An RNA of 207 nucleotides, treated with 2A3 and DMS and read out base by base.
The RNA was probed in 150 mM KOAc, 10 mM MgCl2 and 150 mM bicine (pH 8.5) at 24 C.
Source: RMDB library M2RFPK, as collected in RNAgym.
For DMS the reverse transcriptase was MarathonRT.
For 2A3, 8,680 sequencing reads were counted.

RNA sequence: GGGAACGACUCGAGUAGAGUCGAAAAGACGCCUUUAGAAGAAGAGGCUAGGGGGUAUUCCGGUGUGGGAUACUUAGUAAUAUGCAACGCUAAUUGCAUAAGAUUGUAGGACGGAAUAUACAGUCUUUAGAGAUAAGCACGUUCGCGUGCUUAUCAACUACCUACUUCUGUUCGCAGAAGUAGGUAGAAAAGAAACAACAACAACAAC
Reactivity to 2A3 in 0.01 (KOAc 150mM, MgCl2 10mM, bicine 150mM(pH8.5), 24C), signal-to-noise 8, nucleotides 027 to 156: g050a010c060g010c010c010u070u050u110a190g040a250a000g020a070a010g010a050g040g000c040u060a080g020g020g010g030g040u020a040u030u030c040c030g070g080u170g030u140g070g050g010a030u030a090c020u010u040a030g030u050a040a110u030a030u110g010c000a020a030c070g020c190u140a110a090u090u020g000c000a010u010a040a030g040a050u040u090g020u060a020g020g090a030c070g010g050a040a010u100a000u020a080c020a010g020u000c000u030u040u100a120g040a000g000a050u000a000a000g000c010a000c010g010u020u070c210g010c000g080u000g000c000u000u000a000u000c000a000a000
Reactivity to DMS in 0.01 (KOAc 150mM, MgCl2 10mM, bicine 150mM(pH8.5), 24C), signal-to-noise 3, nucleotides 027 to 156: g020a120c140g030c000c010u020u000u000a060g030a190a210g010a140a140g010a090g000g000c040u000a050g010g020g020g000g000u000a030u010u000c010c000g020g020u010g030u010g010g010g010a090u000a040c020u010u000a080g020u000a090a160u000a040u000g000c000a040a080c120g010c190u010a090a150u000u000g010c010a050u000a040a040g000a110u000u010g010u000a040g010g000a210c030g030g020a110a140u010a100u000a020c030a050g020u000c020u000u010u010a090g000a170g000a040u000a000a010g000c000a020c000g010u010u000c280g020c040g050u000g000c000u000u000a000u000c000a040a090